[RMDB]
RNA sequence: GGGAACGACUCGAGUAGAGUCGAAAAUUCAGUGCACUUGGGAAGGUCUGAGGAAGCCGACAAUCUCUAAGCGGGAGUCCCUCUCAAGAGGGAGCUCGGGGACCAGAAACGACACUCGCGCGCUUUACGUUUUAAAUUUGUUCGCAAAUUUAAAACGAAAAGAAACAACAACAACAAC
Reactivity to 2A3 in 0.01 (KOAc 150mM, MgCl2 10mM, bicine 150mM(pH8.5), 24C), signal-to-noise 1, nucleotides 027 to 126: u050u020c010a010g020u040g030c000a050c120u130u110g000g000g020a070a070g030g000u000c020u010g090a010g020g000a040a040g030c020c010g050a040c040a080a110u060c030u000c010u150a180a140g100c110g000g020g020a020g090u030c000c000c010u000c000u020c040a190a080g020a020g010g010g000a040g000c020u000c030g000g000g020g060a020c010c010a050g080a060a110a020c030g010a000c010a030c040u000c000g000c000g010c010g000c040u060u030u020a030
Reactivity to DMS in 0.01 (KOAc 150mM, MgCl2 10mM, bicine 150mM(pH8.5), 24C), signal-to-noise 2, nucleotides 027 to 126: u010u010c120a140g020u010g030c030a080c100u000u000g000g000g010a100a080g030g000u000c040u030g000a120g000g010a080a300g000c030c040g020a050c030a090a070u020c030u000c050u000a120a080g030c140g030g020g000a080g010u000c010c010c000u010c000u000c200a070a230g050a010g010g000g010a050g010c070u000c020g000g010g000g000a300c060c030a060g000a030a050a140c130g000a120c060a060c050u010c040g010c080g010c030g000c030u000u010u000a070